The record gives the reactivity of an RNA of 177 nucleotides to 2A3 and DMS. It was measured as part of the RMDB library OK1LIB. Conditions: 150 mM KOAc, 10 mM MgCl2 and 150 mM bicine (pH 8.5), 24 C. DMS adducts were read by reverse transcription with MarathonRT.
RNA sequence: GGGAACGACUCGAGUAGAGUCGAAAACAACUACAAUACCCUCUGGGGUGUCGGUAUAGAACAGGCAACUGCUAAACAAUCGCACCUUAGUCGGCGCGUUUAAUGCAGUCAUGGGACCGAACUCGGCCCGGGUUAGAGAAUUCGUUCUCUAACCCGGAAAAGAAACAACAACAACAAC
Reactivity to 2A3 in 0.01 (KOAc 150mM, MgCl2 10mM, bicine 150mM(pH8.5), 24C), signal-to-noise 4, nucleotides 027 to 126: c010a020a030c050u190a050c110a080a120u170a210c020c030c030u120c090u120g070g010g000g000u070g150u040c010g010g070u040a130u090a150g110a100a040c050a030g040g050c030a040a000c010u000g000c020u060a060a100a060c050a090a050u100c010g020c000a030c000c000u050u080a040g100u190c020g010g010c010g010c000g000u000u030u070a090a040u170g000c010a000g010u060c010a100u110g010g040g070a000c020c010g030a020a030c000u010c010g040g000c000
Reactivity to DMS in 0.01 (KOAc 150mM, MgCl2 10mM, bicine 150mM(pH8.5), 24C), signal-to-noise 3, nucleotides 027 to 126: c080a140a140c170u020a050c110a140a080u010a120c020c000c000u000c170u020g010g010g010g030u000g000u000c030g000g000u010a130u030a100g000a110a120c010a050g010g050c190a160a040c000u010g020c010u000a040a110a140c230a060a010u020c000g030c010a030c000c010u000u000a120g030u050c240g000g030c070g040c030g000u020u010u000a070a130u020g000c030a000g010u000c060a070u020g000g000g000a000c020c000g000a090a050c090u000c020g000g000c090